RNA sequence: GGGAACGACUCGAGUAGAGUCGAAAAGAUAUGGACUUUAAGCUACGGAUCAGAGGAGCAACAGCCUGCAUUCGGAAACGAAUGUCAGGACAUGCUCCUCUGAUCCGUAGCGGAGAGUCCUAAGUCACUACUCCUAAGAGUUCGCUCUUAGGAGUAGAAAAGAAACAACAACAACAAC
Reactivity to DMS in 0.01 (KOAc 150mM, MgCl2 10mM, bicine 150mM(pH8.5), 24C), signal-to-noise 3, nucleotides 027 to 126: g000a040u000a300u000g000g030a030c000u010u010u010a290a300g020c000u000a000c010g000g000a020u010c000a000g000a020g000g010a000g040c000a010a080c240a170g000c010c010u010g010c010a010u000u010c010g040g000a110a160a260c010g010a020a000u000g000u010c020a000g000g000a020c120a090u010g010c000u000c010c000u000c000u000g000a000u000c000c000g000u000a000g010c000g000g010a190g000a000g000u000c000c000u010a010a080g000u010c030a290